[RMDB]
Structure probing data (2A3 and DMS) for a 207-nucleotide construct. 2A3 adducts were read by reverse transcription with SuperScript II with manganese.

RNA sequence: GGGAACGACUCGAGUAGAGUCGAAAAACGAGGCUCGAUCUAACGAUACUGCAAAGCAAGUCCGCUACCGCGAGGUGAUCGAAUGAACCUAAAGCAGAUCGACACCAGCACUACGGCGGGGAAGGGUCUAAUUGAUGCUGCUAGGGCUGCGCUUCCACUGAUAACUUCUUUUCGAAGAAGUUAUCAGAAAAGAAACAACAACAACAAC
Reactivity to 2A3 in 0.01 (KOAc 150mM, MgCl2 10mM, bicine 150mM(pH8.5), 24C), signal-to-noise 6, nucleotides 027 to 156: a000c060g000a040g050g000c030u020c040g060a120u030c040u140a060a070c070g030a040u070a130c030u040g020c060a070a080a110g020c030a060a030g050u030c020c010g000c050u080a100c030c020g030c020g040a120g030g000u050g020a260u020c000g020a020a060u070g040a060a120c080c130u140a190a090a000g040c010a010g020a230u040c010g000a010c010a010c000c010a010g020c030a020c040u130a040c130g010g000c000g000g000g000g020a020a050g030g010g000u000c010u040a060a070u060u120g060a040u080g030c010u000g010c020u040a030g020g030g000c020u040g000c020g010c050u030u010c010c000a020
Reactivity to DMS in 0.01 (KOAc 150mM, MgCl2 10mM, bicine 150mM(pH8.5), 24C), signal-to-noise 2, nucleotides 027 to 156: a090c060g020a150g030g060c040u010c060g010a080u000c070u010a060a130c030g010a110u010a070c060u000g040c030a090a060a130g020c020a090a140g030u000c010c030g020c010u000a050c050c000g000c110g010a170g000g040u000g020a130u010c050g040a050a100u010g000a130a090c070c050u000a070a150a110g000c040a040g000a120u000c000g020a120c020a050c020c020a160g030c120a120c050u020a020c030g020g000c040g000g040g030g000a080a060g010g000g030u000c030u000a060a110u010u000g030a110u010g000c030u000g010c010u000a070g010g000g020c000u000g030c030g010c030u000u000c000c010a300
The data come from the RNA Mapping Database (RMDB), library OK3TST. The reactions ran in a buffer of 150 mM KOAc, 10 mM MgCl2 and 150 mM bicine (pH 8.5), at 24 C. The DMS profile rests on 3,506 reads.